[RMDB]
RNA sequence: GGGAACGACUCGAGUAGAGUCGAAAAGCGGAAACGCGAAUACUCUCUGACUCUCUCAAACCUAGCAUCCAUGAUAAAUAAAUGAGAGAGGAAGGAGAGGAGUAGUGGAUGCUAGGGAAAAUAAAAAGGGAUAAGAAAUGUUCGCAUUUCUUAUCCCAAAAGAAACAACAACAACAAC
Reactivity to DMS in 0.01 (KOAc 150mM, MgCl2 10mM, bicine 150mM(pH8.5), 24C), signal-to-noise 3, nucleotides 027 to 126: g010c010g000g000a060a050a120c000g000c000g010a120a110u060a180c010u000c010u010c000u000g010a210c000u000c000u010c000u000c010a080a180a110c000c000u000a000g010c010a000u000c010c020a020u030g000a300u040a000a060a050u020a020a070a010u010g000a000g000a020g010a000g000g000a090a090g000g000a040g020a020g000g000a110g000u040a080g040u000g030g010a020u000g000c010u000a000g000g000g000a040a070a080a070u060a030a080a070a120a130
Reactivity to 2A3 in 0.01 (KOAc 150mM, MgCl2 10mM, bicine 150mM(pH8.5), 24C), signal-to-noise 4, nucleotides 027 to 126: g000c020g020g030a060a040a010c030g000c000g010a020a040u190a080c010u000c010u000c060u130g080a060c000u040c000u000c000u020c000a080a120a230c040c000u000a000g020c000a000u010c000c000a000u050g060a060u160a140a160a040u170a030a020a080u150g000a010g000a010g010a010g020g020a060a120g140g010a000g010a020g020g050a010g020u090a020g000u010g000g000a000u000g000c000u010a000g010g000g020a010a070a000a020u260a010a060a020a060a000

Source: RMDB library OK1LIB, as collected in RNAgym. The record gives the reactivity of an RNA of 177 nucleotides to DMS and 2A3. For DMS, 5,596 sequencing reads were counted. In probing experiments dimethyl sulfate is read out at A N1 and C N3, which are open when not base-paired. The RNA was probed in 150 mM KOAc, 10 mM MgCl2 and 150 mM bicine (pH 8.5) at 24 C.